Structure probing data (DMS and 2A3) for a 177-nucleotide construct. The RNA was probed in 150 mM KOAc, 10 mM MgCl2 and 150 mM bicine (pH 8.5) at 24 C. The DMS profile rests on 7,343 reads.
[RMDB]
RNA sequence: GGGAACGACUCGAGUAGAGUCGAAAAGAAGAGAAUAAGCGCGGAUAUUUCUGUCGGUAGAGCCGCAGGACCGACACCUGCGAGUAGAGGGAUCAAGACCCUGUUCGCGCAAAGAUUGAAGUAGAAGAUCAUACUCAUCGUUCGCGAUGAGUAUGAUAAAAGAAACAACAACAACAAC
Reactivity to DMS in 0.01 (KOAc 150mM, MgCl2 10mM, bicine 150mM(pH8.5), 24C), signal-to-noise 4, nucleotides 027 to 126: g000a110a060g010a130g000a080a100u020a070a180g020c000g010c000g000g000a020u000a040u000u030u030c010u020g020u010c080g010g040u020a060g000a110g010c060c010g020c000a000g000g000a120c050c050g000a080c080a080c020c000u000g010c020g000a110g030u020a050g000a110g000g000g020a090u050c140a090a070g000a050c000c030c010u000g000u000u010c010g010c000g050c000a080a060a060g000a160u010u010g000a050a200g020u010a040g010a160a070g000
Reactivity to 2A3 in 0.01 (KOAc 150mM, MgCl2 10mM, bicine 150mM(pH8.5), 24C), signal-to-noise 5, nucleotides 027 to 126: g100a020a010g140a010g070a030a130u170a220a050g000c000g010c000g000g020a010u010a040u030u170u000c020u020g130u090c020g100g080u150a050g030a010g100c000c000g000c010a000g020g020a160c030c030g000a010c020a020c000c000u010g010c000g010a050g020u060a040g040a070g040g110g010a020u140c080a100a010g010a040c000c000c000u000g000u000u000c000g000c010g000c000a010a030a000g030a040u080u140g030a050a020g030u170a010g030a140a010g030